[RMDB]
RNA sequence: GGGAACGACUCGAGUAGAGUCGAAAAGACAGCAAGUGGGUACCAUUAUGAUUGUAAUUGUAAGAAAUAUUAUUUCUGUUACAUCAACCUUUGUCAUUUAACUGUCACUCACGUAUGGUAAGUCCUAAGCACUCACUAUGUUCGCAUAGUGAGUGCUAAAAGAAACAACAACAACAAC
Reactivity to DMS in 0.01 (KOAc 150mM, MgCl2 10mM, bicine 150mM(pH8.5), 24C), signal-to-noise 2, nucleotides 027 to 126: g010a020c000a030g000c150a050a090g000u020g000g000g000u000a100c100c090a030u000u040a110u010g020a010u020u070g010u010a010a040u000u040g050u000a130a000g000a000a020a030u010a100u020u060a020u010u000u000c010u000g000u020u000a020c000a000u000c040a050a050c260c140u000u040u020g000u050c050a050u050u040u000a140a100c060u000g000u000c050a110c010u020c010a010c110g040u010a060u070g020g000u000a110a060g000u020c010c070u020a190
Reactivity to 2A3 in 0.01 (KOAc 150mM, MgCl2 10mM, bicine 150mM(pH8.5), 24C), signal-to-noise 4, nucleotides 027 to 126: g090a010c030a020g060c020a010a170g010u030g000g000g010u130a070c090c040a030u090u120a060u130g000a030u050u230g000u020a020a050u060u060g060u240a080a060g080a000a000a030u200a100u300u160a050u050u230u000c020u020g030u050u020a020c000a000u000c020a010a130c040c020u060u100u090g030u080c030a010u070u080u140a170a070c020u060g010u020c050a010c010u020c000a020c030g110u070a060u050g010g000u050a070a020g040u000c000c000u030a020

Chemical mapping of a 177-nucleotide RNA with DMS and 2A3. The reactions ran in a buffer of 150 mM KOAc, 10 mM MgCl2 and 150 mM bicine (pH 8.5), at 24 C. DMS adducts were read by reverse transcription with MarathonRT. For DMS, 2,822 sequencing reads were counted. Values are in units of 0.01, from 0 to 300, in steps of 10. The 2A3 profile rests on 1,700 reads.